RNA sequence: GGGAACGACUCGAGUAGAGUCGAAAAAUCCAAGGGGAGGUUUCGGCCAAAUGUUGUAUGCAGAAAGCGUGAGGAAGGUAGCACUUAGACACUCACGAGUAGCGGUUCGGCAGUAGUGCUAAAAUGAGACAGUACGAAAAGUUCGCUUUUCGUACAAGUAUGUAAGGUACUUCGGUACCUUACAUACAAAAGAAACAACAACAACAAC
Reactivity to 2A3 in 0.01 (KOAc 150mM, MgCl2 10mM, bicine 150mM(pH8.5), 24C), signal-to-noise 3, nucleotides 027 to 156: a000u040c010c000a030a030g010g010g010g010a030g010g000u030u050u160c060g020g000c000c010a080a100a030u130g000u070u030g020u080a060u090g060c030a020g120a150a080a020g050c040g010u030g000a030g040g000a090a010g060g000u040a010g030c010a000c060u050u040a030g050a060c030a000c090u070c030a030c030g020a010g040u060a050g030c030g020g070u050u030c010g020g000c030a020g010u120a000g020u000g020c020u050a060a010a010a080u100g020a040g020a060c060a030g020u010a000c000g000a000a000a010a000g010u030u040c090g020c120u000u000u000u000c000g000u000a000c000a010a010
Reactivity to DMS in 0.01 (KOAc 150mM, MgCl2 10mM, bicine 150mM(pH8.5), 24C), signal-to-noise 3, nucleotides 027 to 156: a060u000c020c040a120a100g000g020g000g000a060g020g030u000u000u000c060g040g070c030c030a080a110a130u010g010u000u000g010u010a070u000g050c020a110g000a080a050a130g020c080g010u010g030a060g010g010a060a050g010g010u000a110g030c040a080c070u000u050a130g000a080c080a090c020u000c020a060c050g010a110g020u000a050g020c040g000g020u000u000c040g020g000c030a090g030u000a030g010u000g030c020u000a020a030a070a100u000g000a170g010a120c050a150g010u010a010c000g000a000a010a010a030g000u010u010c300g050c010u000u000u000u000c000g000u010a010c030a030a080

Source information:
An RNA of 207 nucleotides, treated with 2A3 and DMS and read out base by base. For 2A3 the reverse transcriptase was SuperScript II with manganese. For DMS the reverse transcriptase was MarathonRT. The 2A3 profile rests on 1,912 reads. The DMS profile rests on 6,102 reads. The reactions ran in a buffer of 150 mM KOAc, 10 mM MgCl2 and 150 mM bicine (pH 8.5), at 24 C.